[RMDB]
RNA sequence: GGGAACGACUCGAGUAGAGUCGAAAAGGAUCCUAUCUCGUGGUAACUGGCUCUACAUCAGUUACCAGUGAGUAGGUAUUCACUAUGUGUCAAUGAUGUAGAGGUUGACAUAUAGCAGAUAGGAUCGCUACUGGUAACUAUUCGUAGUUACCAGUAGAAAAGAAACAACAACAACAAC
Reactivity to DMS in 0.01 (KOAc 150mM, MgCl2 10mM, bicine 150mM(pH8.5), 24C), signal-to-noise 9, nucleotides 027 to 126: g010g000a010u000c000c000u000a010u000c000u000c060g020u000g000g010u000a010a010c010u000g010g000c130u000c070u010a110c180a130u000c000a010g010u000u000a010c000c010a060g000u000g010a020g020u000a090g020g020u010a030u000u000c010a030c000u000a010u000g010u000g000u000c010a020a010u000g010a120u010g010u010a110g000a100g010g010u000u000g010a010c010a010u000a010u000a020g010c080a020g000a010u000a010g010g000a020u000c000g000
Reactivity to 2A3 in 0.01 (KOAc 150mM, MgCl2 10mM, bicine 150mM(pH8.5), 24C), signal-to-noise 9, nucleotides 027 to 126: g030g000a000u000c000c000u000a010u000c010u010c020g040u030g010g010u010a010a010c000u000g030g010c020u020c070u130a060c030a070u030c000a010g010u010u000a000c000c000a000g000u010g000a010g020u080a140g080g200u100a080u030u030c000a000c010u020a010u030g020u000g000u000c010a010a010u040g100a070u140g100u230a050g020a030g180g060u010u000g010a000c000a010u020a000u010a010g010c020a000g000a000u000a000g000g000a000u000c010g000